[RMDB]
Structure probing data (DMS) for a 177-nucleotide construct. The RNA was probed in 150 mM KOAc, 10 mM MgCl2 and 150 mM bicine (pH 8.5) at 24 C. Values cover nucleotides 27 to 126. It was measured as part of the RMDB library OK2TST.
RNA sequence: GGGAACGACUCGAGUAGAGUCGAAAAUGUCGCUGCUUGGAUAUAGCCAUGUAACUAGGGGCCUCACCUUAGACUUGCUUGCAAGCAGAUAAGUCGUGAUAUGGGUUUCAACUCAGGCCUAAGGUGAUAAUCGGUUCACUUUCGAGUGAACCGAUUAAAAAGAAACAACAACAACAAC
Reactivity to DMS in 0.01 (KOAc 150mM, MgCl2 10mM, bicine 150mM(pH8.5), 24C), signal-to-noise 2, nucleotides 027 to 126: u000g010u020c020g040c010u000g010c080u000u000g000g010a210u000a080u010a100g010c030c080a020u010g010u000a070a060c090u000a070g000g000g000g000c170c150u010c090a080c000c000u000u000a010g000a110c010u000u000g010c230u000u000g010c120a030a040g010c020a010g020a090u000a060a130g000u010c090g020u000g010a100u010a080u000g000g010g000u000u000u000c180a080a080c080u000c030a030g010g010c010c010u010a010a100g020g020u000g010a170